An RNA of 177 nucleotides, treated with 2A3 and DMS and read out base by base. Reactivities are given for positions 27 through 126. Conditions: 150 mM KOAc, 10 mM MgCl2 and 150 mM bicine (pH 8.5), 24 C. Values are in units of 0.01, from 0 to 300, in steps of 10. DMS adducts were read by reverse transcription with MarathonRT. The data come from the RNA Mapping Database (RMDB), library OK1LIB.
RNA sequence: GGGAACGACUCGAGUAGAGUCGAAAACGAUGGCAUCAAAUUUGGUGUUGCUGUUACAGCAGCUAAUUAUCUGGGACCAAGCGAUCACGAUGUACCCAUGAUUGCAAACACAAUGCUUAAUGUUGCCAAUACGCAUAUAGUUCGCUAUAUGCGUAUUAAAAGAAACAACAACAACAAC
Reactivity to 2A3 in 0.01 (KOAc 150mM, MgCl2 10mM, bicine 150mM(pH8.5), 24C), signal-to-noise 9, nucleotides 027 to 126: c040g070a080u090g010g000c010a010u010c030a050a150a190u080u050u070g020g000u020g010u030u010g030c190u020g030u060u080a090c060a080g020c010a000g020c070u150a090a110u180u160a040u060c030u020g000g000g020a020c030c030a130a020g040c030g080a110u210c070a040c180g050a060u130g030u300a300c000c000c010a030u190g020a060u050u090g000c010a030a020a000c010a000c010a040a020u030g010c000u050u090a040a010u090g010u020u010g000c000c000
Reactivity to DMS in 0.01 (KOAc 150mM, MgCl2 10mM, bicine 150mM(pH8.5), 24C), signal-to-noise 9, nucleotides 027 to 126: c070g000a150u010g010g020c010a030u000c040a050a090a080u010u020u010g010g020u000g010u000u000g000c140u000g020u010u010a090c220a140g010c040a050g010c100u030a070a070u030u030a040u000c040u000g000g000g000a080c090c090a110a090g000c050g010a150u040c150a110c070g010a050u020g000u010a110c020c010c000a050u030g010a030u000u010g000c030a090a040a030c050a050c060a030a010u010g000c020u000u010a040a060u010g000u000u000g000c020c020
The DMS profile rests on 56,037 reads. For 2A3 the reverse transcriptase was SuperScript II with manganese. The 2A3 profile rests on 76,422 reads.